[RMDB]
RNA sequence: GGGAACGACUCGAGUAGAGUCGAAAAUUAAUCCGGCUUUAAGUUGACGAGGGCAGGGUUUAUCGAGACAUCGGCGGGUGCCCUGCGGUCUUCCUGCGACCGUUAGAGGACUGGUAAACCAAUUUAAAUGCGUUUAUAAAUUCGUUUAUAAACGCAUAAAAGAAACAACAACAACAAC
Reactivity to DMS in 0.01 (KOAc 150mM, MgCl2 10mM, bicine 150mM(pH8.5), 24C), signal-to-noise 6, nucleotides 027 to 126: u010u010a080a110u000c030c020g010g020c030u000u000u000a060a110g020u010u000g000a080c090g010a070g000g000g010c040a050g010g000g010u000u000u000a030u010c050g000a130g000a100c110a040u010c050g020g010c060g000g010g020u000g010c030c020c020u000g000c020g000g000u000c030u000u000c080c050u010g020c170g010a040c030c010g010u000u010a040g020a100g000g010a090c060u000g010g010u000a040a060a100c040c050a070a090u010u000u000a040a100
Reactivity to 2A3 in 0.01 (KOAc 150mM, MgCl2 10mM, bicine 150mM(pH8.5), 24C), signal-to-noise 2, nucleotides 027 to 126: u060u030a020a040u070c010c000g030g020c010u060u110u110a070a040g030u160u090g060a040c030g020a050g000g000g000c020a020g000g040g000u020u080u080a070u060c040g050a050g010a030c010a080u060c020g040g000c030g120g030g000u060g020c000c010c000u000g020c020g000g000u000c000u060u060c040c020u030g010c010g030a020c010c020g000u000u060a040g030a080g040g030a050c050u050g000g020u040a010a040a020c020c000a020a100u090u100u210a120a150

The record gives the reactivity of an RNA of 177 nucleotides to DMS and 2A3. For 2A3 the reverse transcriptase was SuperScript II with manganese. The DMS profile rests on 8,760 reads. DMS adducts were read by reverse transcription with MarathonRT. Reactivities are given for positions 27 through 126. The reactions ran in a buffer of 150 mM KOAc, 10 mM MgCl2 and 150 mM bicine (pH 8.5), at 24 C. It was measured as part of the RMDB library M2PK90.